[RMDB]
Conditions: 150 mM KOAc, 10 mM MgCl2 and 150 mM bicine (pH 8.5), 24 C. Chemical mapping of a 177-nucleotide RNA with 2A3 and DMS.
RNA sequence: GGGAACGACUCGAGUAGAGUCGAAAAGCACUUCUGACUGUCAACGUAGUAGCCAUCCCGCCCUAGGAUCUGGUCAGCCAAAAUCUAUGUUACGACGCUCAUCGGACCCACUGGCUCAGAGUAGAAGUAUCUCCAUCCAUUUCGAUGGAUGGAGAUAAAAAGAAACAACAACAACAAC
Reactivity to 2A3 in 0.01 (KOAc 150mM, MgCl2 10mM, bicine 150mM(pH8.5), 24C), signal-to-noise 3, nucleotides 027 to 126: g040c020a010c050u040u030c020u060g080a100c030u080g060u160c040a050a010c050g020u040a060g020u020a020g030c020c000a040u050c020c010c000g020c020c010c000u050a040g050g000a060u020c020u020g000g000u030c020a020g050c030c010a110a160a010a030u080c090u100a120u150g100u050u070a050c090g020a000c040g050c040u010c030a060u040c020g070g000a040c030c010c000a060c100u050g010g000c030u020c040a040g020a010g060u040a000g030a060a010g060
Reactivity to DMS in 0.01 (KOAc 150mM, MgCl2 10mM, bicine 150mM(pH8.5), 24C), signal-to-noise 4, nucleotides 027 to 126: g010c070a110c040u000u000c040u000g010a090c080u000g000u000c100a080a080c090g010u010a050g000u000a070g020c040c010a110u000c030c030c040g020c040c030c040u000a120g010g000a070u010c040u000g000g000u010c050a070g010c070c080a040a060a110a070u000c100u010a060u010g000u000u000a110c070g000a090c080g020c020u000c080a060u000c050g000g010a160c040c000c020a110c130u010g010g010c030u000c020a040g000a100g000u000a060g000a070a100g010

Values are in units of 0.01, from 0 to 300, in steps of 10. DMS adducts were read by reverse transcription with MarathonRT.